Source: RMDB library OK2TST, as collected in RNAgym. The record gives the reactivity of an RNA of 177 nucleotides to DMS and 2A3. The reactions ran in a buffer of 150 mM KOAc, 10 mM MgCl2 and 150 mM bicine (pH 8.5), at 24 C.
RNA sequence: GGGAACGACUCGAGUAGAGUCGAAAACGUGGUGGACAACCACGGGCAGUUCACGCACUUAGAGCAACGGGCGCUUCGUGACCUCGGCGUCGACACCGAGUUGAUCGACAACGACACGCCACCCGAGAGUAAUUAAUCCAUUCGUGGAUUAAUUACUAAAAGAAACAACAACAACAAC
Reactivity to DMS in 0.01 (KOAc 150mM, MgCl2 10mM, bicine 150mM(pH8.5), 24C), signal-to-noise 9, nucleotides 027 to 126: c040g030u000g010g020u000g000g020a110c200a150a070c030c010a020c020g010g000g010c070a100g010u010u000c050a090c120g010c120a080c090u010u000a080g010a100g010c070a110a130c160g010g000g000c060g010c090u000u000c040g010u000g000a140c160c060u010c020g000g010c220g010u000c070g010a050c070a090c060c080g010a070g010u010u000g000a100u000c030g010a050c100a070a220c040g000a060c120a050c060g000c130c030a120c010c010c010g000a150g010
Reactivity to 2A3 in 0.01 (KOAc 150mM, MgCl2 10mM, bicine 150mM(pH8.5), 24C), signal-to-noise 9, nucleotides 027 to 126: c010g010u040g000g010u030g020g100a060c050a110a020c070c010a010c000g000g010g010c040a040g020u050u060c030a020c090g020c010a050c070u100u170a050g020a020g150c020a070a080c110g030g050g000c040g000c020u150u200c030g030u020g040a060c010c010u020c020g020g000c030g050u060c030g020a020c010a020c050c080g070a050g080u070u070g140a300u040c010g020a010c010a070a020c010g020a010c010a010c070g010c010c010a030c000c010c010g110a100g010